Conditions: 150 mM KOAc, 10 mM MgCl2 and 150 mM bicine (pH 8.5), 24 C.
The record gives the reactivity of an RNA of 177 nucleotides to DMS and 2A3.
2A3 adducts were read by reverse transcription with SuperScript II with manganese.
For DMS, 8,036 sequencing reads were counted.
Reactivities are given for positions 27 through 126.
Source: RMDB library OK1LIB, as collected in RNAgym.
[RMDB]
RNA sequence: GGGAACGACUCGAGUAGAGUCGAAAACUAUAUGACUGGAAGAGAUGCAAACAAAGGUUCUUGUGCUCAAUCUUGUAGAUGGCAAUAUCAUUUGGUGGAAGAAAAAAGACCUGGUGAGUAUUUUCCAAGGAUGAUUAUAUUUCGAUAUAAUCAUCCUAAAAGAAACAACAACAACAAC
Reactivity to DMS in 0.01 (KOAc 150mM, MgCl2 10mM, bicine 150mM(pH8.5), 24C), signal-to-noise 4, nucleotides 027 to 126: c030u010a110u030a100u010g000a070c110u010g000g000a060a060g000a070g000a060u020g000c050a050a100a120c140a050a060a060g000g010u010u010c050u010u010g010u000g040c050u020c080a080a070u020c040u000u030g000u030a090g010a050u010g010g000c120a040a070u010a040u020c040a060u020u010u020g010g030u010g000g000a080a090g020a010a050a090a100a100a160g000a030c040c010u000g010g020u010g000a140g020u000a020u000u000u000u010c000c020a050
Reactivity to 2A3 in 0.01 (KOAc 150mM, MgCl2 10mM, bicine 150mM(pH8.5), 24C), signal-to-noise 8, nucleotides 027 to 126: c010u020a020u050a080u300g110a070c040u030g020g030a050a010g020a030g020a060u070g030c030a040a110a070c030a040a180a030g040g010u130u030c040u090u080g050u070g040c030u050c070a080a100u030c040u070u110g070u130a050g010a080u040g030g000c020a030a060u060a060u130c070a110u020u040u100g060g010u070g020g060a120a080g050a050a200a050a050a000a000g030a010c010c010u020g030g000u020g010a030g020u030a070u030u070u030u000c020c010a020